[RMDB]
RNA sequence: GGGAACGACUCGAGUAGAGUCGAAAACCCCUUCAGUUCGCUGAAGGGGAAAGGGUUCUCCCGCCCGCGGUGAACCCAGGCUAAAAGUUAAGGUAGGUGGGCAAACCCUACUCUUCGGAGUAGGGAAGAAUCAUCUAUUGUUCGCAAUAGAUGAUUCAAAAGAAACAACAACAACAAC
Reactivity to DMS in 0.01 (KOAc 150mM, MgCl2 10mM, bicine 150mM(pH8.5), 24C), signal-to-noise 6, nucleotides 027 to 126: c000c000c000c000u000u000c000a010g020u010u010c190g030c000u000g010a010a000g010g010g000g010a010a020a060g000g000g010u000u000c020u000c020c000c080g010c000c010c010g030c050g010g010u000g000a010a020c010c000c000a120g000g020c090u000a040a060a090a120g010u010u000a080a120g010g000u000a060g030g040u000g010g010g010c040a150a080a160c000c000c000u000a000c000u000c000u000u010c170g020g010a020g000u000a000g010g000g000a010a020
Reactivity to 2A3 in 0.01 (KOAc 150mM, MgCl2 10mM, bicine 150mM(pH8.5), 24C), signal-to-noise 8, nucleotides 027 to 126: c000c000c000c000u000u000c010a060g010u020u120c160g010c090u000g000a000a010g010g000g000g000a040a060a070g000g000g000u000u000c010u020c000c000c020g010c000c000c000g020c020g000g000u010g010a000a000c000c010c000a010g090g040c040u120a150a080a030a070g100u300u100a090a040g180g120u130a050g080g080u080g000g000g000c000a010a040a220c000c000c000u000a000c000u010c000u020u120c260g130g010a000g000u000a000g000g000g000a000a000